Background: Chemical mapping of a 177-nucleotide RNA with DMS and 2A3. The RNA was probed in 150 mM KOAc, 10 mM MgCl2 and 150 mM bicine (pH 8.5) at 24 C. Reactivities are given for positions 27 through 126. For DMS the reverse transcriptase was MarathonRT. 2A3 adducts were read by reverse transcription with SuperScript II with manganese. For 2A3, 1,465 sequencing reads were counted. For DMS, 980 sequencing reads were counted.
[RMDB]
RNA sequence: GGGAACGACUCGAGUAGAGUCGAAAAGUCGACCUCCUCAAUCACCCGGGCGUCGGCGGGAACCACCUCGUGGGUCCGCACCUCGAUGAUGUCGCCGGGACGCAGCUCCUCGGCGCGGACUUCGAUGGAACGUCACGGAAUUCGUUCCGUGACGUUCAAAAGAAACAACAACAACAAC
Reactivity to DMS in 0.01 (KOAc 150mM, MgCl2 10mM, bicine 150mM(pH8.5), 24C), signal-to-noise 1, nucleotides 027 to 126: g020u000c000g000a020c000c000u000c000c000u000c180a110a000u000c020a140c130c060c040g010g000g000c300g000u000c090g000g000c040g000g000g020a040a260c040c000a040c000c190u010c210g040u010g000g080g000u060c000c020g000c150a250c030c020u000c000g000a030u050g000a210u000g000u000c000g030c000c000g040g000g000a020c000g020c300a010g050c080u000c000c020u000c020g000g000c020g000c000g000g000a120c000u000u000c030g020a020u030g000
Reactivity to 2A3 in 0.01 (KOAc 150mM, MgCl2 10mM, bicine 150mM(pH8.5), 24C), signal-to-noise 3, nucleotides 027 to 126: g130u030c020g000a050c050c040u080c010c030u010c050a060a080u130c030a050c040c020c000g030g000g020c040g020u030c000g030g000c020g070g010g000a050a030c000c020a030c000c150u070c110g070u160g030g000g030u000c000c010g020c030a060c010c060u000c020g060a050u090g030a020u210g070u090c000g000c020c000g000g000g030a000c050g080c130a080g030c040u010c010c010u150c030g010g000c000g000c000g010g030a040c060u060u020c000g060a090u160g110